Description: An RNA of 207 nucleotides, treated with 2A3 and read out base by base. It was measured as part of the RMDB library M2RFPK.
RNA sequence: GGGAACGACUCGAGUAGAGUCGAAAAGAUCUGCGCCGAUCCGAAAUGCUAGCAAACAGCCCGCAUCAUGUCGUCUCCUAACUUCGACGUGGUGAAAUACUGAGCUUAUGCGAGUAAGCCUGUUAGCAAUAGAUCAGAACGUUCGCGUUCUGAUCAACGCCUCAUUGUAGUUCGCUACAAUGAGGCGAAAAGAAACAACAACAACAAC
Reactivity to 2A3 in 0.01 (KOAc 150mM, MgCl2 10mM, bicine 150mM(pH8.5), 24C), signal-to-noise 2, nucleotides 027 to 156: g020a060u050c030u100g020c050g000c030c010g020a000u020c000c030g060a040a040a020u030g000c020u000a030g040c050a000a140a100c060a060g030c000c000c000g070c000a010u010c000a000u000g000u000c000g060u020c020u060c070c090u110a140a160c060u050u040c000g000a000c000g020u000g000g000u000g040a050a000a000u110a050c050u010g010a020g010c010u030u040a020u070g170c070g000a080g090u030a010a050g000c000c040u020g010u090u050a010g020c020a060a110u040a120g000a000u000c000a000g000a000a000c010g010u080u020c150g000c000g070u000u020c000u010g010a000u010c000a000a000